The record gives the reactivity of an RNA of 207 nucleotides to 2A3. For 2A3, 1,471 sequencing reads were counted. The data come from the RNA Mapping Database (RMDB), library M2RFPK. 2A3 adducts were read by reverse transcription with SuperScript II with manganese.

[RMDB]
RNA sequence: GGGAACGACUCGAGUAGAGUCGAAAAUUUAACGCUGUUUUAUUGGCGCAAAGGUUUACGGAUAAACAACUAAUAAUUAAACCUUUUGUGUGCGAAACGUGGUUGUUUAAUGUACUCUUUAAUCGCUUUGGGGAUGUGUCCUUCGGGACACAUCCAACCCUGAUUGUAAGUUCGCUUACAAUCAGGGAAAAGAAACAACAACAACAAC
Reactivity to 2A3 in 0.01 (KOAc 150mM, MgCl2 10mM, bicine 150mM(pH8.5), 24C), signal-to-noise 3, nucleotides 027 to 156: u080u080u090a060a030c030g000c030u070g090u110u110u040u090a120u100u080g040g000c010g000c000a000a000a000g030g000u000u000u020a040c090g050g030a060u120a270a210a050c070a060a040c040u180a060a180u100a140a050u130u040a010a000a010c000c000u000u010u100u080g040u000g000u030g100c080g020a030a050a020c050g030u030g000g000u070u040g020u000u050u080a100a080u090g010u060a100c030u020c050u080u100u130a090a110u070c070g070c180u070u070u140g100g050g000g000a010u000g000u000g010u010c000c020u000u010c100g030g000g000a000c000a000c000a000u000c000c000a000a000